[RMDB]
RNA sequence: GGGAACGACUCGAGUAGAGUCGAAAAAGAUCCGAUUCGUCGGAUCUGUCGCUCCUAAGUCCCAACGUUUGACGUUGUCAGCUGAUGGUCGGAAACGACCAAUAGCUUGGAUUUACCGAGUUGGGAUAUGGAAAUCUAGCCGAUUUCGAUCGGCUAAGACCAUAAGCUAGUUCGCUAGCUUAUGGUCAAAAGAAACAACAACAACAAC
Reactivity to 2A3 in 0.01 (KOAc 150mM, MgCl2 10mM, bicine 150mM(pH8.5), 24C), signal-to-noise 2, nucleotides 027 to 156: a000g000a000u020c000c000g030a020u040u080c260g070u050c020g070g000a010u000c000u000g020u000c040g050c050u000c000c010u050a090a040g000u010c000c010c000a010a020c060g070u070u100u300g000a050c050g000u030u030g000u000c000a000g000c020u050g050a110u100g080g020u000c000g000g000a100a070a060c000g010a010c000c020a000a050u100a000g000c010u040u100g090g000a020u190u110u130a050c020c010g000a010g080u000u000g000g000g000a010u010a030u060g010g000a060a040a020u080c040u060a090g000c000c000g010a000u070u040u110c250g060a030u010c000g000g000c000u000a030a020
Reactivity to DMS in 0.01 (KOAc 150mM, MgCl2 10mM, bicine 150mM(pH8.5), 24C), signal-to-noise 3, nucleotides 027 to 156: a030g020a020u000c000c000g020a070u010u000c300g040u000c010g000g000a020u000c000u000g000u000c050g000c030u000c010c000u020a090a260g010u010c000c010c000a030a030c020g020u020u010u010g000a090c170g020u000u000g000u000c030a030g050c000u020g020a160u000g010g010u000c000g010g010a190a180a280c010g010a020c010c010a000a050u000a020g010c030u000u020g030g010a070u000u000u000a060c020c000g010a120g000u000u000g010g010g010a030u000a150u010g020g010a110a070a160u000c060u000a000g010c000c000g010a030u000u010u000c290g020a040u000c010g010g010c000u000a000a090
The data come from the RNA Mapping Database (RMDB), library RNAMAK. The record gives the reactivity of an RNA of 207 nucleotides to 2A3 and DMS. High 2A3 reactivity points to a flexible backbone, as in loops and unpaired stretches. The RNA was probed in 150 mM KOAc, 10 mM MgCl2 and 150 mM bicine (pH 8.5) at 24 C.